[RMDB]
The record gives the reactivity of an RNA of 177 nucleotides to DMS and 2A3. The RNA was probed in 150 mM KOAc, 10 mM MgCl2 and 150 mM bicine (pH 8.5) at 24 C. It was measured as part of the RMDB library OK2TST. Values cover nucleotides 27 to 126. For DMS the reverse transcriptase was MarathonRT. For DMS, 8,076 sequencing reads were counted.
RNA sequence: GGGAACGACUCGAGUAGAGUCGAAAAACUUGGCUCUGACUUCUAUGAAGAAGCACUAGACUUUGAUCAGAGGAAAGUGGUCGAGCCUACAGAACCUGAUCAGACUCCUCGCGAGGAGUUCAAUGAGUAUUAAUAGCGUUUUCGAACGCUAUUAAUAAAAAGAAACAACAACAACAAC
Reactivity to DMS in 0.01 (KOAc 150mM, MgCl2 10mM, bicine 150mM(pH8.5), 24C), signal-to-noise 8, nucleotides 027 to 126: a100c070u010u000g010g020c010u000c020u010g010a300c010u000u000c010u010a120u010g020a130a230g010a040a050g000c040a090c130u010a090g010a150c030u000u000u000g010a080u000c020a040g010a070g000g000a080a140a060g020u000g020g010u000c110g000a030g010c030c010u010a090c130a070g000a150a130c080c020u000g010a060u000c050a140g000a030c010u000c000c010u000c080g030c230g000a040g010g000a080g000u000u000c060a070a100u010g000a110g010
Reactivity to 2A3 in 0.01 (KOAc 150mM, MgCl2 10mM, bicine 150mM(pH8.5), 24C), signal-to-noise 5, nucleotides 027 to 126: a010c020u020u060g010g000c010u020c050u090g080a080c010u050u000c030u070a210u260g130a180a120g010a010a000g050c040a040c070u080a050g070a140c000u030u050u110g040a080u080c030a020g030a060g090g050a080a100a030g040u030g010g020u030c020g010a010g020c000c000u030a040c050a020g060a020a020c010c010u030g010a050u040c010a010g000a020c000u010c010c000u010c010g030c050g050a000g010g000a010g000u050u010c010a020a060u140g030a020g070